[RMDB]
Conditions: 150 mM KOAc, 10 mM MgCl2 and 150 mM bicine (pH 8.5), 24 C.
The record gives the reactivity of an RNA of 207 nucleotides to 2A3 and DMS.
The 2A3 profile rests on 1,565 reads.
DMS adducts were read by reverse transcription with MarathonRT.
The DMS profile rests on 2,588 reads.

RNA sequence: GGGAACGACUCGAGUAGAGUCGAAAACGCAAUAAUACAACUUAGGAAUUACGAAGUGCCGCCAGCCAUAAUGGAUUGUUUCCAUUGUGCUUUGGAGAUGCAACAUAUGGGUAUAACACAACUUGUGAGUGAUGCCGAGCGUCUGAAGCAAGUGCUAUCACUGCUGGUAUUUCGAUACCAGCAGUGAAAAAGAAACAACAACAACAAC
Reactivity to 2A3 in 0.01 (KOAc 150mM, MgCl2 10mM, bicine 150mM(pH8.5), 24C), signal-to-noise 3, nucleotides 027 to 156: c020g000c050a010a080u170a170a010u110a130c080a130a010c100u070u120a060g120g070a120a100u140u060a120c060g030a090a040g010u000g060c010c020g000c000c010a000g000c000c010a070u090a090a030u080g020g020a030u050u150g120u150u120u000c010c000a000u000u030g030u010g000c030u100u040u060g020g020a020g020a020u100g000c010a060a020c010a060u140a100u160g080g000g020u080a050u060a170a040c090a020c030a120a180c060u080u100g020u010g120a080g070u080g030a020u040g020c040c060g070a060g060c020g020u000c000u040g030a010a000g010c000a020a010g010u010g040c060u050a020
Reactivity to DMS in 0.01 (KOAc 150mM, MgCl2 10mM, bicine 150mM(pH8.5), 24C), signal-to-noise 2, nucleotides 027 to 156: c030g000c090a090a130u000a090a200u020a050c090a070a030c040u000u000a060g030g030a110a110u000u000a050c030g020a040a250g000u000g000c020c030g040c050c020a090g050c250c050a030u000a000a040u010g000g000a100u000u010g030u000u000u000c020c010a020u010u000g080u000g000c080u000u000u000g000g000a070g010a050u000g030c060a050a060c060a090u000a060u000g000g000g000u000a070u000a100a110c070a040c060a060a150c010u000u000g030u000g010a240g000u010g010a090u000g000c010c070g020a150g000c030g050u000c050u000g000a060a150g000c050a030a080g030u000g040c030u000a130